[RMDB]
An RNA of 177 nucleotides, treated with DMS and 2A3 and read out base by base. The RNA was probed in 150 mM KOAc, 10 mM MgCl2 and 150 mM bicine (pH 8.5) at 24 C. For 2A3, 1,625 sequencing reads were counted. DMS (dimethyl sulfate) methylates the pairing face of unpaired adenines and cytosines. The DMS profile rests on 1,978 reads. DMS adducts were read by reverse transcription with MarathonRT.
RNA sequence: GGGAACGACUCGAGUAGAGUCGAAAAAGCGCCGACGGCCACGUGCGUCCGUUCGACGCGCGCGCGAGCGGCACGCUGUUCGGCGACGCGGUCGGCGCGGUCGUGCUCAAGCGGCUCGACCUCGCCAACCGCCCAUCACUUUCGAGUGAUGGGCGGUAAAAGAAACAACAACAACAAC
Reactivity to DMS in 0.01 (KOAc 150mM, MgCl2 10mM, bicine 150mM(pH8.5), 24C), signal-to-noise 1, nucleotides 027 to 126: a120g020c040g000c000c000g020a020c040g030g000c000c150a050c150g000u000g040c040g000u000c030c090g020u000u000c050g040a070c040g020c140g030c130g020c030g030c000g000a020g020c020g000g010c100a030c010g010c030u000g000u000u000c040g010g000c030g010a040c050g000c040g010g010u000c060g000g000c000g030c070g000g000u000c010g000u000g000c000u010c020a190a190g030c240g010g020c000u010c000g010a010c000c010u000c010g000c010c010a100
Reactivity to 2A3 in 0.01 (KOAc 150mM, MgCl2 10mM, bicine 150mM(pH8.5), 24C), signal-to-noise 1, nucleotides 027 to 126: a000g030c010g000c000c000g020a030c000g020g030c030c040a080c070g090u040g000c000g100u020c010c030g050u010u000c060g050a200c040g080c040g010c010g000c070g030c000g050a010g000c020g040g050c060a010c020g020c030u030g090u240u070c030g050g000c040g030a030c030g020c030g070g070u050c060g010g000c010g020c000g000g000u020c000g000u020g010c010u030c070a220a090g110c070g060g000c000u000c010g000a010c000c000u000c010g030c000c000a000